Chemical mapping of a 207-nucleotide RNA with 2A3 and DMS.

RNA sequence: GGGAACGACUCGAGUAGAGUCGAAAACUGGCUUAAAUUACUAAUGUCUACCCUUGGAGGUGGGAGUGAGGUCCAUUCCAUUCAAAUGACAGGCUGGUAUAUGUGAAAAGAGAUGGAUUCAGUGCAGGCAACGUUUACCCUAAAGAGAAUGCAAAAAACUGCUGAUAAAUUUCGAUUUAUCAGCAGUAAAAGAAACAACAACAACAAC
Reactivity to 2A3 in 0.01 (KOAc 150mM, MgCl2 10mM, bicine 150mM(pH8.5), 24C), signal-to-noise 2, nucleotides 027 to 156: c040u020g040g000c010u090u130a020a100a120u190u120a150c040u090a040a090u050g020u010c000u030a070c000c030c000u030u080g070g000a050g020g020u030g010g010g000a030g010u050g000a020g040g020u040c000c000a030u040u000c030c010a030u060u090c020a090a050a100u100g020a030c010a010g010g000c010u010g020g000u050a120u010a020u150g110u050g080a010a070a030a070g040a000g000a010u030g080g000a030u090u010c050a030g010u000g030c000a000g000g040c020a030a000c000g000u020u010u100a090c010c010c000u030a010a070a000g030a000g030a050a110u120g000c050a160a000a010a120a020
Reactivity to DMS in 0.01 (KOAc 150mM, MgCl2 10mM, bicine 150mM(pH8.5), 24C), signal-to-noise 1, nucleotides 027 to 156: c100u000g020g010c000u010u000a020a090a120u000u000a070c090u000a070a090u010g010u000c010u000a120c030c030c020u010u000g010g000a140g040g000u000g010g000g020a090g030u000g010a050g000g000u010c020c040a080u010u000c010c000a150u000u000c040a070a070a090u010g010a150c030a060g040g000c070u010g010g000u010a040u010a050u010g000u020g000a100a020a150a110g000a090g010a070u000g010g010a170u000u000c030a040g040u000g030c000a010g000g020c060a030a040c060g010u000u000u000a120c020c020c020u010a060a040a150g030a140g010a150a090u020g050c070a000a120a150a160a070

For 2A3, 1,208 sequencing reads were counted.